[RMDB]
RNA sequence: GGGAACGACUCGAGUAGAGUCGAAAAACCUUAUCCUCGAAACGGCAGAAGAGGAGCUCAUGUUCAAAAGAAUGUGUCGUGAAUGCAGUCAAGCAGACAGGCAGCUUCGUCAGAAAUUCCUUAGUAACAAUGUGCUAUAGUUCGCUAUAGCACAUUGAAAAGAAACAACAACAACAAC
Reactivity to 2A3 in 0.01 (KOAc 150mM, MgCl2 10mM, bicine 150mM(pH8.5), 24C), signal-to-noise 9, nucleotides 027 to 126: a000c010c000u020u080a120u060c000c000u020c020g040a110a080a040c040g090g000c070a030g030a180a000g010a040g020g010a010g000c020u040c040a060u090g050u140u040c050a100a100a030a090g080a040a070u070g020u010g020u050c030g050u030g050a050a020u080g000c010a020g100u090c040a080a050g030c030a020g040a060c020a010g040g030c010a040g030c010u060u040c020g080u030c020a020g070a060a070a040u040u020c010c020u110u110a030g030u010a110a050
Reactivity to DMS in 0.01 (KOAc 150mM, MgCl2 10mM, bicine 150mM(pH8.5), 24C), signal-to-noise 8, nucleotides 027 to 126: a070c030c020u010u030a110u010c010c010u000c030g000a100a090a080c100g010g010c080a070g010a150a140g000a060g010g000a060g010c080u010c040a070u010g010u000u010c080a090a090a110a110g000a050a030u010g010u000g010u000c050g010u010g000a070a090u010g000c030a050g010u010c090a060a080g010c050a060g010a110c060a070g000g010c050a050g000c030u000u000c050g010u000c040a060g010a060a050a130u000u010c000c010u000u020a080g020u020a080a180
The record gives the reactivity of an RNA of 177 nucleotides to 2A3 and DMS. Values cover nucleotides 27 to 126. The RNA was probed in 150 mM KOAc, 10 mM MgCl2 and 150 mM bicine (pH 8.5) at 24 C.